The record gives the reactivity of an RNA of 177 nucleotides to DMS and 2A3.

[RMDB]
RNA sequence: GGGAACGACUCGAGUAGAGUCGAAAACAAGUGAGGGCCAAUCCUUGUGUUGUCCUGAAGGGCCCCACGGCCACUACUGCUGUGCCAUCAUGUGGGGGUAGCCCAUGGCCUACACCCGUCCAGGCACCCAUCUAAGGCAGUUCGCUGCCUUAGAUGGAAAAGAAACAACAACAACAAC
Reactivity to DMS in 0.01 (KOAc 150mM, MgCl2 10mM, bicine 150mM(pH8.5), 24C), signal-to-noise 4, nucleotides 027 to 126: c040a040a030g020u000g000a120g000g000g010c060c050a160a200u010c050c030u000u020g000u000g000u010u000g000u010c000c000u000g020a180a090g010g000g000c000c000c020c030a070c050g010g010c030c010a080c090u010a070c170u000g010c130u010g010u000g010c000c020a110u010c110a110u020g000u000g010g000g000g000g040u000a070g000c020c010c070a120u010g000g050c100c020u000a010c030a080c020c010c000g020u020c100c150a130g000g010c040a080c070
Reactivity to 2A3 in 0.01 (KOAc 150mM, MgCl2 10mM, bicine 150mM(pH8.5), 24C), signal-to-noise 3, nucleotides 027 to 126: c030a070a040g070u070g200a120g010g060g030c010c000a010a110u060c050c010u060u050g000u000g030u080u130g010u060c010c030u020g090a090a220g010g000g010c020c000c010c000a020c000g030g020c030c010a100c050u190a080c070u120g120c010u040g050u110g020c060c000a120u190c040a070u280g020u100g010g000g010g020g060u040a010g020c010c010c040a090u110g040g000c040c010u040a010c020a020c060c000c010g050u020c040c010a010g000g000c020a050c000

High 2A3 reactivity points to a flexible backbone, as in loops and unpaired stretches. The RNA was probed in 150 mM KOAc, 10 mM MgCl2 and 150 mM bicine (pH 8.5) at 24 C. 2A3 adducts were read by reverse transcription with SuperScript II with manganese. It was measured as part of the RMDB library OK2TRN.